An RNA of 207 nucleotides, treated with 2A3 and read out base by base. For 2A3, 449 sequencing reads were counted.
[RMDB]
RNA sequence: GGGAACGACUCGAGUAGAGUCGAAAAGCCUGAAUGAUGCACGUAAAUCUUUAUUUCAAUUUGUUAUAGUUGCAAACGACGAUAACUACGCUCUAGCGGCUUAAUCCCGCUAGCGCAGACUGGGACCGUUGUUCGUGGCACCCAGCUCUGUGUCGACGAUUCGUCAUUACUUCGGUAAUGACGAAUCAAAAGAAACAACAACAACAAC
Reactivity to 2A3 in 0.01 (KOAc 150mM, MgCl2 10mM, bicine 150mM(pH8.5), 24C), signal-to-noise 1, nucleotides 027 to 156: g190c030c000u040g010a040a170u120g040a060u140g010c040a000c200g110u090a090a170a230u020c070u020u300u220a260u080u260u100c020a100a070u060u030u150g060u030u090a070u000a150g020u050u070g040c020a040a000a110c060g030a000c000g010a020u020a090a020c030u100a080c130g010c000u000c000u000a000g000c010g000g060c050u170u090a090a030u070c040c000c000g000c000u000a000g000c000g010c000a000g010a000c000u000g000g000g000a000c000c020g060u110u060g120u120u080c090g000u090g000g000c030a300c010c000c010a000g010c110u030c000u020g010u000g030u010c040g150a120c040